Conditions: 150 mM KOAc, 10 mM MgCl2 and 150 mM bicine (pH 8.5), 24 C. Chemical mapping of a 177-nucleotide RNA with 2A3 and DMS. Reactivities are given for positions 27 through 126.
[RMDB]
RNA sequence: GGGAACGACUCGAGUAGAGUCGAAAACAAAUUUACAUCACUAGAUCCUAAGGAAGACCCAUUUCUACCUGAGGGCCUCAAUAACGAAGAGAGCACGCAGCAUCUAGUAGAGAUGGUAUGGCUGAAGUAGUAUCGCAGUAUUCGUACUGCGAUACUAAAAAGAAACAACAACAACAAC
Reactivity to 2A3 in 0.01 (KOAc 150mM, MgCl2 10mM, bicine 150mM(pH8.5), 24C), signal-to-noise 2, nucleotides 027 to 126: c010a000a120a020u150u200u130a110c070a110u170c050a000c030u010a040g030a160u050c020c020u050a040a060g070g060a060a030g050a110c060c010c000a030u020u010u010c000u020a020c000c030u000g000a040g020g020g000c000c000u000c020a070a200u120a180a070c070g060a120a070g000a000g010a020g000c020a010c100g010c030a040g030c010a090u060c010u060a050g000u020a000g010a010g000a040u010g050g000u080a130u140g050g000c080u040g000a040a010g020
Reactivity to DMS in 0.01 (KOAc 150mM, MgCl2 10mM, bicine 150mM(pH8.5), 24C), signal-to-noise 3, nucleotides 027 to 126: c090a040a100a090u000u010u000a080c060a070u010c090a050c060u020a090g010a040u000c040c020u010a080a130g000g020a110a040g000a170c210c030c030a060u000u000u000c010u000a070c010c020u000g020a050g000g000g020c010c010u000c030a030a050u020a080a100c300g000a160a100g000a060g010a110g030c020a040c040g020c100a070g010c240a100u000c040u000a080g000u000a040g020a040g000a020u020g000g010u000a040u020g010g000c060u000g000a060a070g010

High DMS reactivity at an A or C suggests that its Watson-Crick edge is free.